[RMDB]
About this RNA
An RNA of 207 nucleotides, treated with 2A3 and read out base by base. The 2A3 profile rests on 633 reads. The reactions ran in a buffer of 150 mM KOAc, 10 mM MgCl2 and 150 mM bicine (pH 8.5), at 24 C.
RNA sequence: GGGAACGACUCGAGUAGAGUCGAAAAAUCAACCAUGCCCACAUCGUAUCGGUCAUCAACACUUGGGAACGUGCAAAUUGAUGCUCAAAAUACCUUUGAACAAUACCAUAACUUAGCUCAAACGCGCACGAAUACUAUGAAUGCACUUUCAACACUACCACCCUAGACGAUUCGUCGUCUAGGGUGGAAAAGAAACAACAACAACAAC
Reactivity to 2A3 in 0.01 (KOAc 150mM, MgCl2 10mM, bicine 150mM(pH8.5), 24C), signal-to-noise 2, nucleotides 027 to 156: a000u050c010a000a070c030c000a080u230g010c120c000c000a000c010a060u010c010g030u020a100u030c060g000g080u030c010a000u000c000a040a030c040a030c200u090u120g080g000g000a060a010c110g000u000g000c060a030a080a080u070u060g000a040u240g010c000u060c170a000a010a120a010u100a240c050c080u190u060u120g030a070a040c020a000a160u090a300c120c000a000u080a150a080c090u100u080a010g010c000u030c030a070a080a010c080g000c050g000c010a000c020g100a020a020u080a150c170u080a030u100g090a070a090u030g030c030a020c070u130u050u110c040a020a020c040a000c000u130a070